[RMDB]
RNA sequence: GGGAACGACUCGAGUAGAGUCGAAAAGAAAAUGUUUUAAUGGAGCAUUUAAAACCAGUUGUAGCUAAAUUAAGAGAAGCUGGUUGUGAAAUAACAGAAAUGGACAAUUCUGUAAGAGUUGUAGGUCAGUAGUAGGCUAGUUCGCUAGCCUACUACUAAAAGAAACAACAACAACAAC
Reactivity to DMS in 0.01 (KOAc 150mM, MgCl2 10mM, bicine 150mM(pH8.5), 24C), signal-to-noise 2, nucleotides 027 to 126: g000a140a030a050a010u000g000u000u000u000u020a140a200u040g010g010a010g000c000a010u010u000u010a110a010a030a090c000c020a110g020u000u000g010u000a100g030c000u000a010a090a070u030u000a240a200g000a170g000a130a140g000c000u000g020g000u000u000g000u000g010a010a120a100u010a030a080c020a030g000a000a020a010u010g040g000a030c150a110a120u010u000c030u000g030u000a120a040g000a070g010u000u010g000u000a090g000g000u000c170

An RNA of 177 nucleotides, treated with DMS and read out base by base. Reactivities are given for positions 27 through 126. The data come from the RNA Mapping Database (RMDB), library OK1LIB. For DMS the reverse transcriptase was MarathonRT. For DMS, 1,678 sequencing reads were counted. The RNA was probed in 150 mM KOAc, 10 mM MgCl2 and 150 mM bicine (pH 8.5) at 24 C.